[RMDB]
RNA sequence: GGGAACGACUCGAGUAGAGUCGAAAAAAAAAAAGAUAUGGAUGUAGCUAGGACUUAAGCUACCCACCAGUUAUCGGAAACGAUAACUGAGGCUUAGUCCUUGGACCUACAUCCUAAGUCAAAAAAAUCCUAUGCUAAAGUUCGCUUUAGCAUAGGAAAAAGAAACAACAACAACAAC
Reactivity to DMS in 0.01 (KOAc 150mM, MgCl2 10mM, bicine 150mM(pH8.5), 24C), signal-to-noise 1, nucleotides 027 to 126: a000a060a050a060a190a240a110g000a040u050a300u000g040g000a050u000g000u000a010g020c040u000a050g010g000a010c010u000u020a000a010g000c060u000a090c050c070c050a300c160c000a010g020u040u000a000u000c000g050g000a090a060a230c000g000a010u000a000a010c020u000g000a020g050g020c020u000u000a010g000u000c000c010u000u000g050g000a120c300c010u000a000c000a010u000c010c010u000a000a080g000u000c030a000a000a030a190a040a150a150